RNA sequence: GGGAACGACUCGAGUAGAGUCGAAAAAUCCCUCUGCACUUCGGUAAUAUGAGGGCACAGUAAAUCCCGCAAGGAUGAGAAUGUGAUGUGGAAUGAGUAAAUCUAAGGUGAGGAGGCAUCCUCUUUAUCGGUCUGUGUUAUUCGUAACACAGACCGAAAAAGAAACAACAACAACAAC
Reactivity to DMS in 0.01 (KOAc 150mM, MgCl2 10mM, bicine 150mM(pH8.5), 24C), signal-to-noise 2, nucleotides 027 to 126: a070u000c050c000c000u000c010u000g000c070a030c030u010u010c140g030g000u000a110a150u020a050u010g000a050g000g000g020c210a040c060a020g000u030a110a250a070u000c000c010c000g000c180a210a240g000g010a010u010g020a090g000a080a160u000g000u000g030a080u000g010u000g010g000a040a040u010g000a080g030u000a040a040a060u020c060u000a050a090g020g020u010g020a100g000g000a070g000g010c090a070u030c030c040u000c040u000u000u000a030
Reactivity to 2A3 in 0.01 (KOAc 150mM, MgCl2 10mM, bicine 150mM(pH8.5), 24C), signal-to-noise 3, nucleotides 027 to 126: a000u020c000c010c000u000c010u020g050c040a020c020u000u040c160g120g000u080a090a070u050a070u270g030a010g000g010g030c030a020c020a010g050u110a060a030a010u040c000c010c010g000c070a040a060g010g010a020u040g000a080g030a100a010u040g020u040g040a070u080g050u070g090g060a110a140u120g050a030g000u130a050a030a200u180c090u050a060a060g010g070u020g090a040g020g000a010g000g030c000a060u050c000c010u030c030u040u000u060a150

The data come from the RNA Mapping Database (RMDB), libraries RFM100 and RFMREP. The record gives the reactivity of an RNA of 177 nucleotides to DMS and 2A3. Values cover nucleotides 27 to 126. The reactions ran in a buffer of 150 mM KOAc, 10 mM MgCl2 and 150 mM bicine (pH 8.5), at 24 C. The 2A3 profile rests on 1,379 reads.